[RMDB]
RNA sequence: GGGAACGACUCGAGUAGAGUCGAAAAAUAGCAGUGGUUGCCACCGAGAUGAUAGCUUUAUCAGCAACUCUGCUUUGCAAUGACUUCACAGCAAGGUUACCAAGAAGCAGAUGGGCUAUGAAGGAGACUCCUUCUAUUAGUUCGCUAAUAGAAGGAGAAAAGAAACAACAACAACAAC
Reactivity to DMS in 0.01 (KOAc 150mM, MgCl2 10mM, bicine 150mM(pH8.5), 24C), signal-to-noise 6, nucleotides 027 to 126: a050u010a040g010c030a040g010u010g020g010u000u010g010c020c050a120c150c090g010a120g020a120u000g010a080u000a080g010c110u000u010u000a040u000c100a070g000c010a020a030c020u000c000u000g010c010u000u000u000g010c140a140a140u000g010a070c020u010u000c040a070c120a080g010c100a070a040g000g000u010u000a070c060c040a070a260g000a050a050g000c020a020g000a030u000g010g000g010c030u000a040u000g010a040a040g010g010a150g010a170
Reactivity to 2A3 in 0.01 (KOAc 150mM, MgCl2 10mM, bicine 150mM(pH8.5), 24C), signal-to-noise 3, nucleotides 027 to 126: a000u120a010g010c020a010g020u050g110g050u090u060g020c010c030a080c040c080g080a070g020a110u160g020a040u070a070g060c050u120u100u050a040u040c060a000g010c010a000a050c010u000c020u020g010c000u010u000u020g000c020a050a070u060g000a030c020u020u030c080a060c040a150g080c040a030a070g040g030u040u020a050c050c000a060a020g030a050a000g010c020a010g020a080u060g000g050g000c000u010a020u060g030a040a010g040g040a050g030a030